RNA sequence: GGGAACGACUCGAGUAGAGUCGAAAAGAGAGCACCAAGGGGAACAUCCCGCGCAUCGCUUGUUCCCAUUGUCGCGUACACCAAAUUCCCGCAUGUCGCCACCAACCAUCCCGUGUGGAUGGCCCUCCCAACUUACCUUUCCUCUGCAUCAUGUAGCCAGUAUGAUAUAGUUCGCUAUAUCAUACUGAAAAGAAACAACAACAACAAC
Reactivity to DMS in 0.01 (KOAc 150mM, MgCl2 10mM, bicine 150mM(pH8.5), 24C), signal-to-noise 3, nucleotides 027 to 156: g000a150g010a150g020c040a130c100c070a120a120g010g000g020g030a080a100c050a070u020c020c010c040g030c140g040c130a120u000c070g010c060u000u000g000u010u000c010c010c000a280u000u010g020u000c020g000c030g030u010a100c050a120c070c020a040a130a290u010u000c000c000c010g040c120a120u000g000u000c020g020c020c020a120c020c000a100a000c010c000a030u000c000c010c020g000u000g020u000g040g010a040u000g020g000c000c060c020u000c040c020c030a100a070c080u000u000a050c060c020u000u000u000c030c010u010c070u010g010c050a140u020c090a100u000g000u010a120g010c100
Reactivity to 2A3 in 0.01 (KOAc 150mM, MgCl2 10mM, bicine 150mM(pH8.5), 24C), signal-to-noise 9, nucleotides 027 to 156: g090a000g010a010g000c030a010c070c030a080a070g020g010g010g020a030a050c010a100u130c050c060c010g020c030g010c050a160u170c110g020c060u040u050g010u010u000c000c000c010a030u030u090g030u030c040g000c030g050u090a040c060a050c030c080a040a080a120u070u030c010c000c000g000c040a040u130g040u060c020g020c030c010a060c020c040a120a100c000c000a020u020c010c000c020g260u170g080u280g160g000a000u000g000g000c000c000c000u000c010c000c000a020a040c030u050u090a060c020c010u030u060u050c010c010u050c030u040g030c010a070u050c020a070u220g030u100a030g060c040